Notes
An RNA of 177 nucleotides, treated with DMS and 2A3 and read out base by base. Source: RMDB library OK2TST, as collected in RNAgym. The 2A3 profile rests on 25,831 reads. DMS adducts were read by reverse transcription with MarathonRT. The reactions ran in a buffer of 150 mM KOAc, 10 mM MgCl2 and 150 mM bicine (pH 8.5), at 24 C.
[RMDB]
RNA sequence: GGGAACGACUCGAGUAGAGUCGAAAACGCUGCGUCCGAGCAUACAACAGAUGCUUCCUUUUGGGUUUGCGGUCCACCACGCCGGCAUGAGCCGUGAGGAGCGCAGCCUCGUGGAAUCAUUAUUUGCUAAUAUUUAUGACUUCGGUCAUAAAUAUUAAAAAGAAACAACAACAACAAC
Reactivity to DMS in 0.01 (KOAc 150mM, MgCl2 10mM, bicine 150mM(pH8.5), 24C), signal-to-noise 9, nucleotides 027 to 126: c110g010c040u000g020c040g020u010c020c020g000a080g010c030a130u010a090c130a080a090c200a140g010a020u000g000c080u000u000c010c010u000u000u010u020g010g000g010u000u010u000g030c010g010g000u000c010c010a120c110c060a070c090g010c100c030g000g000c110a130u010g000a110g010c070c030g010u000g010a150g000g000a040g000c010g010c010a020g000c010c010u000c300g010u000g000g000a040a030u000c020a030u000u000a130u010u000u000g010c140
Reactivity to 2A3 in 0.01 (KOAc 150mM, MgCl2 10mM, bicine 150mM(pH8.5), 24C), signal-to-noise 9, nucleotides 027 to 126: c040g020c030u060g010c020g050u020c030c020g020a020g010c010a050u110a120c070a150a010c020a110g050a040u010g010c000u020u020c010c000u090u110u170u220g070g000g000u160u220u100g020c020g040g140u000c010c010a060c110c020a030c050g040c040c030g060g090c130a160u270g120a040g060c040c010g010u030g010a040g010g000a020g060c010g000c000a000g010c000c000u030c030g060u040g010g020a030a020u020c010a020u040u130a110u110u130u090g020c010